RNA sequence: GGGAACGACUCGAGUAGAGUCGAAAAGGGUUACCGUUCGCGGUAACCCAAAUAAAAUCAGCGGUAAGCUCCCGUAAAAUAUUACCGCUGAACGGGUGCUUAAAAUCGAUGUGUUCGCACAUCGAAAGUCUAUAACAAACUUCGGUUUGUUAUAGACAAAAGAAACAACAACAACAAC
Reactivity to DMS in 0.01 (KOAc 150mM, MgCl2 10mM, bicine 150mM(pH8.5), 24C), signal-to-noise 3, nucleotides 027 to 126: g010g010g020u000u000a020c000c000g020u000u020c210g040c010g030g000u010a000a000c000c000c000a010a010a030u010a090a100a130a120u000c000a010g020c000g000g000u000a010a050g010c240u000c030c000c000g010u000a100a110a090a100u010a070u000u000a010c020c000g010c000u000g000a030a050c180g010g010g020u000g010c090u000u000a050a040a100a090u000c000g010a010u010g010u000g010u000u010c190g030c000a010c000a010u000c000g000a000a020a050
Reactivity to 2A3 in 0.01 (KOAc 150mM, MgCl2 10mM, bicine 150mM(pH8.5), 24C), signal-to-noise 3, nucleotides 027 to 126: g010g010g000u010u010a010c010c000g000u000u040c240g000c000g080g000u000a000a010c000c000c010a000a020a000u020a000a040a010a100u020c000a000g000c000g020g000u010a020a010g040c040u010c020c000c000g020u040a110a170a120a070u190a030u040u030a010c000c010g000c010u000g000a010a000c010g100g040g040u190g040c060u150u220a050a120a070a120u070c000g010a000u010g010u000g020u010u050c230g000c060a000c000a000u000c000g000a000a010a000

Conditions: 150 mM KOAc, 10 mM MgCl2 and 150 mM bicine (pH 8.5), 24 C. The record gives the reactivity of an RNA of 177 nucleotides to DMS and 2A3. It was measured as part of the RMDB library M2PK50. For 2A3, 4,897 sequencing reads were counted.